[RMDB]
RNA sequence: GGGAACGACUCGAGUAGAGUCGAAAAGUGUCUAGGAUCCAGACUAGCAGUACUCAUGGAUCCUGACGAUGCAGAGUACCUAGGGUACGAGGAUCUAGUGAUCCAGCUAGCUAGGCUAGACGUCUAGCCGUCCUAGUCCGUUCGCGGACUAGGACGGAAAAGAAACAACAACAACAAC
Reactivity to 2A3 in 0.01 (KOAc 150mM, MgCl2 10mM, bicine 150mM(pH8.5), 24C), signal-to-noise 2, nucleotides 027 to 126: g130u080g010u030c090u130a020g040g000a000u040c020c020a040g070a070c040u040a020g000c050a030g010u050a080c020u080c070a110u040g030g000a000u000c000c000u000g010a000c030g010a020u130g050c080a020g000a030g130u030a070c010c010u090a110g200g040g050u060a010c000g020a090g000g000a020u030c030u100a060g060u100g290a010u030c010c010a020g040c000u040a010g010c000u020a040g000g030c000u050a080g020a110c070g000u000c020u010a020g000
Reactivity to DMS in 0.01 (KOAc 150mM, MgCl2 10mM, bicine 150mM(pH8.5), 24C), signal-to-noise 2, nucleotides 027 to 126: g020u000g020u010c010u010a000g010g000a030u020c000c030a080g010a100c020u000a050g020c130a130g020u000a100c090u000c100a200u010g010g000a010u000c000c010u000g010a030c150g020a060u000g030c090a090g010a190g000u000a020c010c030u000a090g000g020g010u000a030c020g000a230g000g010a000u000c010u000a140g010u000g000a020u000c010c020a080g020c050u010a040g000c050u000a070g000g000c010u000a080g000a080c160g010u010c020u000a020g000